[RMDB]
RNA sequence: GGGAACGACUCGAGUAGAGUCGAAAAGCUAUUCACGCGGUGUUCCUCUACUACGCUAUUCGCAAUGGCAUGGAUAUGGGGAUCGUCAACGCCGGGCAGCUGGCGAUUUACGACGACCUGCCCGCGACCAUAGCUGGAUCUUCGGAUCCAGCUAUGGAAAAGAAACAACAACAACAAC
Reactivity to 2A3 in 0.01 (KOAc 150mM, MgCl2 10mM, bicine 150mM(pH8.5), 24C), signal-to-noise 3, nucleotides 027 to 126: g010c040u070a080u160u110c080a030c070g020c000g010g050u060g050u020u010c010c000u020c000u040a030c000u010a020c060g030c020u020a030u060u150c100g050c160a060a030u050g020g000c010a010u050g000g030a110u050a100u240g000g010g010g000a040u010c000g030u000c010a050a050c000g000c000c000g010g030g020c040a050g070c040u030g000g000c000g010a030u090u110u080a070c060g000a000c040g040a040c000c000u010g000c000c000c020g030c010g010a010
Reactivity to DMS in 0.01 (KOAc 150mM, MgCl2 10mM, bicine 150mM(pH8.5), 24C), signal-to-noise 3, nucleotides 027 to 126: g020c090u000a090u010u010c130a100c050g000c040g020g020u000g000u000u000c000c000u000c020u010a100c030u010a060c100g000c030u000a020u000u010c300g020c190a210a120u000g000g000c040a110u010g010g000a120u000a020u020g010g000g020g010a060u000c020g030u000c010a110a090c050g000c010c030g020g000g000c290a120g020c030u000g010g020c010g010a090u000u020u000a090c180g010a050c020g000a050c050c040u010g010c130c010c030g020c010g000a270

The record gives the reactivity of an RNA of 177 nucleotides to 2A3 and DMS.
Values are in units of 0.01, from 0 to 300, in steps of 10.
For DMS, 2,198 sequencing reads were counted.